RNA sequence: GGGAACGACUCGAGUAGAGUCGAAAAUUGAGCCUUCCGGGAAAUAGUCUUCUGCAGGCGGAAUGCUUUCCAGCCCAGUACAGGAGGGAAGGUCACCCAGGCAAUGAUCAGGACUACAAGGGAACUCAAAAGGAGAUCGGUUCGCCGAUCUCCUUUUAAAAGAAACAACAACAACAAC
Reactivity to DMS in 0.01 (KOAc 150mM, MgCl2 10mM, bicine 150mM(pH8.5), 24C), signal-to-noise 2, nucleotides 027 to 126: u040u010g000a110g010c010c010u000u000c020c000g060g010g000a070a040a140u010a090g010u010c000u000u000c030u000g010c050a210g000g030c120g010g020a040a030u020g000c040u000u000u000c000c030a190g000c030c000c120a110g030u040a130c070a040g060g010a040g040g000g020a010a010g020g010u000c150a130c020c020c010a170g010g000c110a080a040u040g000a080u010c080a070g000g030a100c020u020a030c050a080a160g000g000g010a120a080c100u020c080
Reactivity to 2A3 in 0.01 (KOAc 150mM, MgCl2 10mM, bicine 150mM(pH8.5), 24C), signal-to-noise 1, nucleotides 027 to 126: u100u110g020a000g050c000c000u030u000c030c000g100g000g050a140a120a000u120a030g150u070c010u170u020c000u020g040c000a030g030g010c000g000g100a040a050u300g040c120u000u020u020c000c000a010g030c020c010c000a000g000u110a120c000a040g100g000a000g000g010g000a000a010g040g030u010c000a000c000c000c020a060g120g020c000a020a010u070g000a000u020c000a020g010g010a050c000u020a000c010a040a000g050g000g040a020a000c000u010c080
This 177-nucleotide RNA was probed chemically with DMS and 2A3. The DMS profile rests on 1,698 reads. The RNA was probed in 150 mM KOAc, 10 mM MgCl2 and 150 mM bicine (pH 8.5) at 24 C. The 2A3 profile rests on 527 reads.